Chemical mapping of a 177-nucleotide RNA with 2A3 and DMS.
Reactivities are given for positions 27 through 126.
For DMS the reverse transcriptase was MarathonRT.
The reactions ran in a buffer of 150 mM KOAc, 10 mM MgCl2 and 150 mM bicine (pH 8.5), at 24 C.
For DMS, 3,053 sequencing reads were counted.
It was measured as part of the RMDB library M2PK50.
[RMDB]
RNA sequence: GGGAACGACUCGAGUAGAGUCGAAAACUAUGCAGAUUCGUCUGCAUAGAGACCCGAUGAACCGGCACUUACACAGCUUCAUACACGUAAGAAGUGCAAUAAAGGGACGAGGGUUCGCCCUCGUCAAGUAGAUACUUAGCUUCGGCUAAGUAUCUACAAAAGAAACAACAACAACAAC
Reactivity to 2A3 in 0.01 (KOAc 150mM, MgCl2 10mM, bicine 150mM(pH8.5), 24C), signal-to-noise 4, nucleotides 027 to 126: c010u020a000u010g000c000a010g020a050u020u110c110g140u000c070u000g010c000a000u000a010g000a000g020a020c000c020c020g040a150u140g070a050a050c050c020g070g000c010a010c010u020u100a060c090a010c030a070g050c020u010u060c020a070u160a210c070a020c150g060u050a030a070g060a090a000g060u010g000c020a000a070u160a140a070a040g120g030g010a000c000g000a000g030g000g010u050u040c170g110c000c000c020u000c000g000u000c000a000a000
Reactivity to DMS in 0.01 (KOAc 150mM, MgCl2 10mM, bicine 150mM(pH8.5), 24C), signal-to-noise 4, nucleotides 027 to 126: c000u000a000u000g000c000a020g010a030u000u000c150g010u000c000u010g000c000a010u000a000g010a120g000a160c010c000c000g020a150u010g000a050a040c100c050g010g010c010a010c010u000u000a060c090a040c070a130g000c090u010u010c230a070u000a090c230a060c060g000u020a130a080g000a020a030g010u000g000c010a060a030u020a020a090a300g010g010g000a010c000g010a020g000g020g010u000u030c210g000c000c000c000u000c000g000u000c010a000a050